An RNA of 177 nucleotides, treated with DMS and 2A3 and read out base by base. Reactivities are rounded to 0.1 and cut off at 0 and 3. Reactivities are given for positions 27 through 126.

RNA sequence: GGGAACGACUCGAGUAGAGUCGAAAAUGCCAUGAUUGUCUGAGGAAGGGAGAAAAAGUCUUUGAAGUGGCUACCAGGAUCCUUUGCAGAUCUCUGGGAUGUCAUUCACUCAUGCUUCUAUGCUGGGCAAUUCCGAUUCUUUCGAGAAUCGGAAUUGAAAAGAAACAACAACAACAAC
Reactivity to DMS in 0.01 (KOAc 150mM, MgCl2 10mM, bicine 150mM(pH8.5), 24C), signal-to-noise 5, nucleotides 027 to 126: u030g010c040c010a100u010g020a100u010u000g000u020c060u020g020a070g020g010a060a070g000g000g000a040g000a080a060a050a120a080g000u010c070u000u010u000g010a070a030g050u020g000g000c000u000a300c000c000a020g000g000a010u000c010c030u010u050u060g010c270a140g010a010u000c010u050c000u010g000g000g000a100u050g010u000c010a040u010u000c060a120c010u010c020a030u040g010c020u000u000c090u010a060u020g010c010u000g000g000g000
Reactivity to 2A3 in 0.01 (KOAc 150mM, MgCl2 10mM, bicine 150mM(pH8.5), 24C), signal-to-noise 5, nucleotides 027 to 126: u120g040c000c010a040u090g040a160u070u130g040u040c020u050g030a030g030g020a040a030g030g050g030a020g060a030a110a010a030a020g080u030c070u060u110u050g060a110a070g050u000g030g000c000u010a050c000c000a000g010g010a000u010c000c030u160u130u300g040c180a050g000a040u010c210u000c000u100g000g040g000a020u130g020u000c000a000u010u030c010a010c010u040c000a020u240g020c010u110u090c030u120a070u220g010c010u020g000g010g000